[RMDB]
Background
The record gives the reactivity of an RNA of 207 nucleotides to 2A3 and DMS. For DMS the reverse transcriptase was MarathonRT. For DMS, 7,345 sequencing reads were counted. High 2A3 reactivity points to a flexible backbone, as in loops and unpaired stretches. The reactions ran in a buffer of 150 mM KOAc, 10 mM MgCl2 and 150 mM bicine (pH 8.5), at 24 C.
RNA sequence: GGGAACGACUCGAGUAGAGUCGAAAAAACGCGAAAGUCGGACGGCGGCCAUGAGUCGCAACGCAAAGCCGCGGCAAGUGGAGUUAGCGAGAAGAGACUAGGCUUUGGUUUCUUCAAAUGAAGCGGUAAAAGGUUCGAGACUUCGGUCUCGAACCAACAGAUGGAUAUAGUUCGCUAUAUCCAUCUGAAAAGAAACAACAACAACAAC
Reactivity to 2A3 in 0.01 (KOAc 150mM, MgCl2 10mM, bicine 150mM(pH8.5), 24C), signal-to-noise 4, nucleotides 027 to 156: a010a000c120g020c040g050a190a050a010g090u120c060g070g050a120c070g040g010c020g000g020c020c010a150u140g010a030g050u010c010g000c030a030a020c020g010c100a080a110a020g000c020c010g000c020g000g030c050a070a050g030u040g050g050a080g020u090u110a040g060c020g030a050g010a060a010g010a000g010a000c020u020a030g140g080c040u140u070u080g000g000u010u000u010c000u000u000c020a020a050a070u160g030a100a010g010c030g020g010u070a070a060a030a070g010g000u000u000c000g000a000g000a000c000u040u090c260g050g000u000c000u000c000g000a000a000c000c000a000a000
Reactivity to DMS in 0.01 (KOAc 150mM, MgCl2 10mM, bicine 150mM(pH8.5), 24C), signal-to-noise 3, nucleotides 027 to 156: a040a050c030g020c020g000a110a080a110g020u000c030g000g010a210c060g030g010c010g010g000c020c050a140u010g010a300g030u000c020g040c000a050a030c040g020c030a140a100a190g020c010c010g030c030g000g020c030a090a240g020u010g010g020a150g020u000u000a060g010c020g000a160g010a050a030g010a060g010a020c020u000a060g020g010c120u000u000u000g040g020u000u000u000c010u010u000c030a030a080a070u000g000a070a120g020c020g010g020u000a050a070a120a130g020g000u010u000c000g000a030g000a020c010u000u000c300g040g010u000c010u000c000g000a000a010c000c000a010a030